[RMDB]
RNA sequence: GGGAACGACUCGAGUAGAGUCGAAAAAGGUACAAAAAAUCAAUUGUACAUCGAUUGACCUCAUCUGAUUCGUCAUCUCAUUAGGUGUCAACCUUGUAUUAAUCAUCGCAAUUUCAAUAUUUGCCAAAUAUCGUUACGUCUUCGGACGUAACGAUAUAAAAGAAACAACAACAACAAC
Reactivity to 2A3 in 0.01 (KOAc 150mM, MgCl2 10mM, bicine 150mM(pH8.5), 24C), signal-to-noise 2, nucleotides 027 to 126: a030g080g000u030a030c050a000a040a020a030a010a180u190c070a020a160u030u000g010u010a050c000a070u050c020g040a050u000u030g010a030c020c000u000c010a070u030c060u150g010a080u000u030c020g000u030c030a120u020c030u000c020a090u130u170a010g000g000u050g090u040c030a050a040c000c000u030u040g080u070a110u040u240a110a090u130c070a040u080c030g000c060a020a030u000u100u080c030a150a000u100a100u250u070u020g010c020c000a090a200
Reactivity to DMS in 0.01 (KOAc 150mM, MgCl2 10mM, bicine 150mM(pH8.5), 24C), signal-to-noise 2, nucleotides 027 to 126: a070g000g000u000a010c070a000a030a070a180a080a100u020c150a080a040u000u040g000u030a040c040a040u010c070g010a270u000u000g000a070c010c030u010c150a040u010c030u010g000a040u010u000c090g000u000c130a090u010c010u010c020a100u000u000a000g020g010u000g010u020c160a040a050c020c040u000u000g000u000a060u030u010a150a070u010c110a050u000c090g010c010a020a020u000u010u020c170a070a090u010a070u000u000u000g020c010c160a060a130